Structure probing data (2A3 and DMS) for a 207-nucleotide construct. It was measured as part of the RMDB library RNAMAK. The reactions ran in a buffer of 150 mM KOAc, 10 mM MgCl2 and 150 mM bicine (pH 8.5), at 24 C.
[RMDB]
RNA sequence: GGGAACGACUCGAGUAGAGUCGAAAACGCUCAUUCGUGAGCGGUAAGGCGUACUACGACAUGACAUGAUCUCAGUGAGAUCCCAUUCCCAAAUAGGAAUGAACUCUCAUAGAGAUCAACAGCAUGUCGUAUCGCGAACGUCGUGAUUCGUCACGAAAGGAAUCAUGUUCUUCGGAACAUGAUUCCUAAAAGAAACAACAACAACAAC
Reactivity to 2A3 in 0.01 (KOAc 150mM, MgCl2 10mM, bicine 150mM(pH8.5), 24C), signal-to-noise 2, nucleotides 027 to 156: c010g020c000u010c000a040u060u080c300g150u090g020a000g000c080g000g030u090a080a000g220g010c030g010u090a070c080u020a000c000g030a010c000a000u020g120a050c000a080u040g000a010u000c010u000c000a030g000u000g000a000g000a010u010c000c000c000a000u000u010c000c000c030a060a270a150u200a040g000g000a010a000u000g020a090a050c020u010c000u000c020a010u050a080g000a020g000a000u010c000a000a000c000a040g040c000a020u000g020u010c000g000u000a000u060c010g020c010g020a040a040c060g120u020c000g000u000g010a000u030u150c250g010u010c110a000c010g050a060a040
Reactivity to DMS in 0.01 (KOAc 150mM, MgCl2 10mM, bicine 150mM(pH8.5), 24C), signal-to-noise 2, nucleotides 027 to 156: c020g000c000u020c000a210u000u010c200g000u000g000a000g030c000g040g000u000a050a090g000g030c000g050u010a070c040u010a030c010g040a020c010a000u000g010a080c070a300u040g010a010u000c000u010c010a300g000u000g060a020g000a020u000c040c010c000a040u010u010c000c000c000a060a120a190u000a040g010g010a020a020u000g010a030a040c020u010c020u000c020a020u000a300g000a030g010a050u000c000a030a040c060a150g000c010a030u000g010u000c010g000u000a000u000c030g000c070g000a120a110c010g000u020c000g030u000g010a130u000u000c260g000u010c000a060c000g010a000a050